The record gives the reactivity of an RNA of 177 nucleotides to 2A3 and DMS. The reactions ran in a buffer of 150 mM KOAc, 10 mM MgCl2 and 150 mM bicine (pH 8.5), at 24 C. Reactivities are given for positions 27 through 126. For 2A3, 1,861 sequencing reads were counted. Source: RMDB libraries RFM100 and RFMREP, as collected in RNAgym.
RNA sequence: GGGAACGACUCGAGUAGAGUCGAAAACCGUAACAGCGAACAACAUCGUUCGUUUCUCCCGUCAAGCCGCCCCUGUGGCUGCCUGACACUCUUAACGGAGACGGGGUGAGGUCAGCCUUGUCACCCAUUAAGGGUUCGAAUUCGUUCGAACCCUUAAAAAAGAAACAACAACAACAAC
Reactivity to 2A3 in 0.01 (KOAc 150mM, MgCl2 10mM, bicine 150mM(pH8.5), 24C), signal-to-noise 3, nucleotides 027 to 126: c010c000g040u100a140a050c030a040g010c000g000a000a020c000a020a020c020a300u180c090g010u000u020c000g000u010u060u000c060u010c010c000c010g000u000c000a010a020g000c000c000g020c010c000c010c050u140g120u240g060g000c000u000g000c000c010u000g000a020c000a080c030u090c020u090u160a090a060c030g000g000a020g000a040c010g000g000g000g010u010g040a030g020g050u100c060a020g060c000c000u000u010g080u000c020a050c050c010c010a010
Reactivity to DMS in 0.01 (KOAc 150mM, MgCl2 10mM, bicine 150mM(pH8.5), 24C), signal-to-noise 3, nucleotides 027 to 126: c000c000g010u060a070a140c180a030g000c000g000a020a050c030a220a180c180a140u040c200g010u000u010c020g010u000u010u010c040u010c010c020c090g000u020c010a010a060g030c030c030g000c010c000c020c180u000g020u040g000g010c010u010g000c000c030u010g000a030c010a150c100u030c040u000u000a160a090c270g000g000a090g000a080c140g020g000g010g040u000g010a210g010g000u010c140a100g000c100c000u000u000g020u000c050a110c000c020c050a130